[RMDB]
RNA sequence: GGGAACGACUCGAGUAGAGUCGAAAACGGAGAAACCACCUCCAGAGGACCCCUUCAGCGAACAGAGGGCACUGCGCGAGCAGGAGUAAGAGCGUAGCGAUGGGGGGAGAUGCUAGGAGUUAGAGGACUAAUUUAUAAGGUUCGCCUUAUAAAUUAGAAAAGAAACAACAACAACAAC
Reactivity to 2A3 in 0.01 (KOAc 150mM, MgCl2 10mM, bicine 150mM(pH8.5), 24C), signal-to-noise 2, nucleotides 027 to 126: c020g030g030a060g070a110a130a010c000c000a030c040c010u000c010c010a000g030a020g060g040a060c000c000c000c000u010u090c030a050g040c000g070a080a020c030a070g100a130g060g070g000c010a010c020u020g030c020g030c040g030a050g000c000a020g040g050a060g030u060a100a050g040a000g120c090g020u030a010g050c030g030a070u050g010g020g000g000g010g000a040g000a020u090g020c000u040a060g010g000a040g040u100u130a130g020a050g170g020a030
Reactivity to DMS in 0.01 (KOAc 150mM, MgCl2 10mM, bicine 150mM(pH8.5), 24C), signal-to-noise 4, nucleotides 027 to 126: c110g040g010a110g000a130a150a150c030c060a090c150c000u000c010c000a100g000a080g000g010a300c110c020c000c010u000u010c040a090g010c020g000a080a060c030a080g010a120g000g000g010c040a090c000u000g000c010g000c220g010a180g010c030a010g000g000a140g010u020a050a080g020a180g010c090g000u000a140g010c020g000a070u010g010g000g000g010g000g020a060g000a090u020g000c040u000a120g010g000a030g000u000u000a050g010a110g000g010a240
Chemical mapping of a 177-nucleotide RNA with 2A3 and DMS. Conditions: 150 mM KOAc, 10 mM MgCl2 and 150 mM bicine (pH 8.5), 24 C. Source: RMDB library VIROID, as collected in RNAgym. For DMS the reverse transcriptase was MarathonRT. The 2A3 profile rests on 1,899 reads.